[RMDB]
RNA sequence: GGGAACGACUCGAGUAGAGUCGAAAACGUUGAUUCAGAUAAUUGGUUUUUGCGGCUGUCUGACCAGGCAGUGCCGCGAAGCUACCAUCUGCCGGAUUAUGGCUGAACGCCUCUAAGUCAGAAUCCGUCAUGGCUGUUUAUUCGUAAACAGCCAUGAAAAAGAAACAACAACAACAAC
Reactivity to DMS in 0.01 (KOAc 150mM, MgCl2 10mM, bicine 150mM(pH8.5), 24C), signal-to-noise 5, nucleotides 027 to 126: c110g000u010u000g010a130u020u000c000a030g000a040u000a100a180u020u030g000g010u000u000u010u000u010g010c000g000g010c000u000g000u000c000u000g000a160c290c220a050g010g000c000a010g020u020g010c010c000g010c000g000a010a010g000c040u000a060c270c120a040u000c020u010g000c300c010g000g000a020u010u000a070u000g010g000c000u000g000a150a100c110g010c020c030u000c030u010a200a040g020u000c000a010g000a030a010u010c010c000g000
Reactivity to 2A3 in 0.01 (KOAc 150mM, MgCl2 10mM, bicine 150mM(pH8.5), 24C), signal-to-noise 5, nucleotides 027 to 126: c060g010u010u060g050a170u110u060c020a020g020a070u050a060a170u210u100g000g040u030u010u000u010u270g000c000g000g000c000u000g010u040c010u030g160a240c050c080a010g000g000c010a010g030u040g230c020c000g000c010g000a010a000g010c040u030a030c000c030a010u020c010u030g070c060c010g000g000a000u020u020a020u070g000g000c000u000g030a170a040c060g100c030c010u000c020u060a040a000g000u000c000a010g020a020a020u000c000c000g000